An RNA of 177 nucleotides, treated with 2A3 and DMS and read out base by base.
Values cover nucleotides 27 to 126.
RNA sequence: GGGAACGACUCGAGUAGAGUCGAAAACUUUCGGAUUCGUUUUUAAUUUUUCCGCUACUUCUUUUAAUAAUGCAAUUUGAUCAUUCAUUAAACGAUACGCAGCUUUUCCUGUAACUGCUUCAAUCCGUGAUUCUAGGUUUUUCGAAACCUAGAAUCAAAAAGAAACAACAACAACAAC
Reactivity to 2A3 in 0.01 (KOAc 150mM, MgCl2 10mM, bicine 150mM(pH8.5), 24C), signal-to-noise 2, nucleotides 027 to 126: c000u030u170u080c040g020g000a020u060u020c030g060u030u050u060u060u160a110a080u100u070u040u110u050c020c020g000c050u040a070c030u030u060c000u070u110u030u030a090a050u060a020a000u070g000c000a080a170u120u040u280g050a080u200c000a000u020u040c020a000u000u070a050a040a000c020g040a040u030a070c060g020c010a010g010c000u080u140u040u110c010c010u020g000u040a070a060c030u040g000c000u070u100c070a040a030u070c000c000g060
Reactivity to DMS in 0.01 (KOAc 150mM, MgCl2 10mM, bicine 150mM(pH8.5), 24C), signal-to-noise 3, nucleotides 027 to 126: c040u000u010u010c020g020g010a040u000u000c100g010u000u010u000u000u020a040a110u010u010u000u010u010c040c040g040c140u010a070c110u000u000c010u000u000u000u000a020a060u000a020a000u010g000c090a150a120u010u000u000g010a120u010c030a010u000u000c090a020u000u000a020a030a030c070g010a040u000a070c170g010c030a010g000c070u000u000u000u000c060c080u000g000u020a020a070c100u000g010c050u010u000c100a030a050u000c030c040g010
The data come from the RNA Mapping Database (RMDB), library OK2TST. For 2A3, 1,857 sequencing reads were counted.